Background: Structure probing data (DMS and 2A3) for a 207-nucleotide construct. For 2A3, 5,193 sequencing reads were counted. It was measured as part of the RMDB library OK3TST.
RNA sequence: GGGAACGACUCGAGUAGAGUCGAAAAUAAUGAGGGUAUGCAAAUGAUUCCAUUACUGUGGAUAUUAUCCGCCUACGCAUUCGCGAGGGUAUUUGAGGCUGAUACUCUGUACCAGAUGAUUUGUUAUGGCGCGCUGUUCUGCCUGUCAGGUGGUGCAAAAAGACGUUAUAUUCGUAUAACGUCUUUUAAAAGAAACAACAACAACAAC
Reactivity to DMS in 0.01 (KOAc 150mM, MgCl2 10mM, bicine 150mM(pH8.5), 24C), signal-to-noise 7, nucleotides 027 to 156: u010a060a100u000g000a150g010g010g020u000a030u000g000c070a060a090a090u000g010a100u010u000c020c020a070u000u010a100c140u010g040u010g020g020a080u000a050u000u000a070u000c040c030g040c020c030u000a110c120g010c060a130u010u000c050g030c040g010a230g010g010g020u000a020u000u000u010g010a080g010g020c050u010g020a140u000a060c020u000c040u000g020u000a030c030c010a100g010a110u000g010a100u000u010u000g020u000u010a120u010g010g020c010g020c080g020c060u000g010u010u000c040u000g010c010c020u000g000u000c060a090g010g040u000g010g020u000g020c060a060
Reactivity to 2A3 in 0.01 (KOAc 150mM, MgCl2 10mM, bicine 150mM(pH8.5), 24C), signal-to-noise 7, nucleotides 027 to 156: u170a010a080u100g030a060g010g020g010u070a030u090g070c050a040a050a080u110g040a070u130u000c030c020a030u100u160a190c110u170g030u040g040g010a010u040a060u130u070a030u070c010c020g000c010c010u070a080c090g010c020a050u090u150c070g010c030g020a070g040g040g000u040a060u050u120u140g020a010g010g000c050u040g020a030u050a130c030u020c020u050g000u030a040c020c010a030g040a130u060g000a020u040u060u110g060u090u070a050u120g010g010c000g000c010g000c040u020g030u100u040c000u020g030c010c010u050g070u080c010a000g000g060u040g010g010u050g030c040a000